[RMDB]
Source information
The data come from the RNA Mapping Database (RMDB), library OK2TST. Structure probing data (DMS and 2A3) for a 177-nucleotide construct. The 2A3 profile rests on 13,943 reads. Conditions: 150 mM KOAc, 10 mM MgCl2 and 150 mM bicine (pH 8.5), 24 C.

RNA sequence: GGGAACGACUCGAGUAGAGUCGAAAAUGUGUAUUGGUUUUGAUAUGUAAUCAUCCAUACCGCUUGCAAAACACUUAUCUUUAUAAUCUUGCAAAGCAUGCGCUGUUACAGCAACCAAAAUACAUGGCACGUGUUAGAAAUUCGUUUCUAACACGUGAAAAGAAACAACAACAACAAC
Reactivity to DMS in 0.01 (KOAc 150mM, MgCl2 10mM, bicine 150mM(pH8.5), 24C), signal-to-noise 6, nucleotides 027 to 126: u000g020u000g020u000a050u000u000g010g000u000u000u000u000g010a180u010a080u000g010u000a010a030u010c030a020u000c030c010a030u000a070c140c140g000c040u000u000g000c010a010a010a060a070c150a110c290u000u000a030u000c240u010u000u000a050u000a050a030u010c060u000u000g000c000a030a020a100g010c000a030u000g000c060g000c040u000g000u000u000a010c010a020g010c020a020a020c000c000a010a010a060a030u000a010c010a010u000g000g010
Reactivity to 2A3 in 0.01 (KOAc 150mM, MgCl2 10mM, bicine 150mM(pH8.5), 24C), signal-to-noise 7, nucleotides 027 to 126: u050g010u000g000u010a030u020u030g030g020u010u070u090u130g070a120u090a070u290g010u010a010a010u040c010a020u000c010c000a000u030a090c060c060g010c020u000u000g000c000a030a020a100a030c060a070c060u090u090a070u130c030u020u280u060a140u060a100a050u030c010u030u000g000c020a080a040a050g010c010a010u010g000c020g000c020u010g010u020u010a010c010a200g110c060a080a060c000c070a030a000a030a000u020a010c010a010u020g070g000